[RMDB]
About this RNA:
Conditions: 150 mM KOAc, 10 mM MgCl2 and 150 mM bicine (pH 8.5), 24 C. An RNA of 177 nucleotides, treated with DMS and 2A3 and read out base by base. For 2A3, 1,356 sequencing reads were counted. For DMS the reverse transcriptase was MarathonRT.

RNA sequence: GGGAACGACUCGAGUAGAGUCGAAAACAAUUGUGUUAAAAUGCUUUGUGACCAUGCUGGUACCGGUAUGGCUAUUACUGUUAAACCUGAGGCUACUACUAGUCAGGAUUCAUAUGGUGGUGCUUCAUCCAUCCUGGUAUUUCGAUACCAGGAUGGAAAAAGAAACAACAACAACAAC
Reactivity to DMS in 0.01 (KOAc 150mM, MgCl2 10mM, bicine 150mM(pH8.5), 24C), signal-to-noise 3, nucleotides 027 to 126: c070a050a100u000u010g010u010g010u000u010a030a080a090a100u020g000c050u000u010u010g020u000g000a110c030c020a040u000g010c000u000g010g020u000a080c160c070g030g000u010a030u000g000g020c040u000a030u010u010a070c100u010g000u010u000a050a080a110c060c060u000g000a070g000g010c050u000a040c060u010a040c040u000a050g000u020c140a120g020g010a090u010u000c080a090u000a080u010g010g020u000g010g000u000g010c010u000u000c030a130
Reactivity to 2A3 in 0.01 (KOAc 150mM, MgCl2 10mM, bicine 150mM(pH8.5), 24C), signal-to-noise 2, nucleotides 027 to 126: c030a010a110u130u120g070u020g050u140u120a060a080a060a010u110g020c030u040u100u070g060u060g050a060c010c020a040u030g030c020u050g030g180u170a120c100c060g000g000u040a000u000g030g000c000u030a060u100u100a090c030u010g030u050u110a050a110a030c000c000u050g020a010g050g010c020u100a030c000u020a030c020u000a030g080u100c060a010g120g090a140u100u180c070a080u120a070u220g000g000u010g020g000u020g020c000u030u030c000a010